RNA sequence: GGGAACGACUCGAGUAGAGUCGAAAACGGAUUCGACAGGCAUUAUGAGACCUAUUUUGCGACUCAUCUAGCGGAUGUAAAACGCCAGUUAAAUAUAACUGCAAAAAAUACAAAUUCUUACGCAGUAGCUGCCUAAAAACCAGCCUGUGUGAUCAAUCAGUACAACAAAGUUCGCUUUGUUGUACUGAAAAGAAACAACAACAACAAC
Reactivity to DMS in 0.01 (KOAc 150mM, MgCl2 10mM, bicine 150mM(pH8.5), 24C), signal-to-noise 1, nucleotides 027 to 156: c030g040g060a120u030u010c070g020a040c090a080g000g000c000a120u000u010a070u000g000a090g080a040c030c000u000a160u010u000u000u020g000c050g000a090c000u000c000a100u000c000u000a070g010c060g060g040a130u000g010u020a080a170a100a100c030g030c070c030a040g040u000u000a020a050a160u000a130u000a080a070c010u000g000c000a060a000a030a160a090a120u020a160c120a060a110a200u010u010c040u000u000a190c050g000c000a070g010u030a130g000c000u000g000c020c000u000a100a040a070a180a110c300c000a070g000c000c000u020g010u000g010u000g000a120u000c070a100a240u000
Reactivity to 2A3 in 0.01 (KOAc 150mM, MgCl2 10mM, bicine 150mM(pH8.5), 24C), signal-to-noise 5, nucleotides 027 to 156: c050g030g050a070u110u110c050g040a040c040a060g030g010c040a040u100u080a090u290g050a040g040a110c010c000u030a110u070u070u070u080g040c020g040a050c020u020c070a020u020c070u040a010g000c020g020g020a030u070g040u290a020a100a000a020c030g040c050c000a000g000u020u040a040a290a100u220a110u070a090a030c010u020g010c030a010a040a040a010a050a080u170a070c050a040a150a100u150u020c040u050u020a010c000g000c000a000g000u040a050g000c000u010g000c010c000u060a060a050a010a000a000c000c000a000g000c000c000u000g000u010g010u040g010a070u070c030a030a020u010